[RMDB]
RNA sequence: GGGAACGACUCGAGUAGAGUCGAAAAGAUAUGGACCACUCUGAGAGCGAUGAAAUCGGAAACGAUGGAGCUCCAGAGGUGGUCCUAAGUCAAAAGUACCAAGCAACGUUCGCGUUGCUUGGUACAACCAUAGGUACGUGUUCGCACGUACCUAUGGAAAAGAAACAACAACAACAAC
Reactivity to DMS in 0.01 (KOAc 150mM, MgCl2 10mM, bicine 150mM(pH8.5), 24C), signal-to-noise 3, nucleotides 027 to 126: g000a060u010a300u000g020g010a030c000c000a020c000u010c000u010g010a160g000a000g040c010g030a140u020g030a060a110a010u000c000g020g010a120a100a250c010g000a010u000g000g000a090g020c000u000c000c000a010g000a000g040g030u000g000g010u010c000c000u000a010a020g000u010c050a040a090a140a130g020u000a010c010c000a000a010g000c000a020a010c000g010u000u010c280g020c010g010u000u000g000c010u000u010g000g010u000a000c010a020a090
Reactivity to 2A3 in 0.01 (KOAc 150mM, MgCl2 10mM, bicine 150mM(pH8.5), 24C), signal-to-noise 4, nucleotides 027 to 126: g010a020u090a050u150g000g000a010c010c000a040c010u000c010u040g300a300g000a010g300c040g280a300u020g060a030a040a020u010c000g000g020a090a020a040c010g000a000u000g020g000a010g000c000u000c010c000a000g010a030g030g020u030g010g000u000c000c000u000a010a020g050u010c020a040a050a000a080g010u000a000c000c000a000a000g020c000a000a000c000g060u130u180c300g020c010g160u000u030g000c000u000u000g000g000u000a000c000a000a010
Notes:
The data come from the RNA Mapping Database (RMDB), library TTRDEL. An RNA of 177 nucleotides, treated with DMS and 2A3 and read out base by base. For 2A3, 6,877 sequencing reads were counted. DMS (dimethyl sulfate) methylates the pairing face of unpaired adenines and cytosines. DMS adducts were read by reverse transcription with MarathonRT.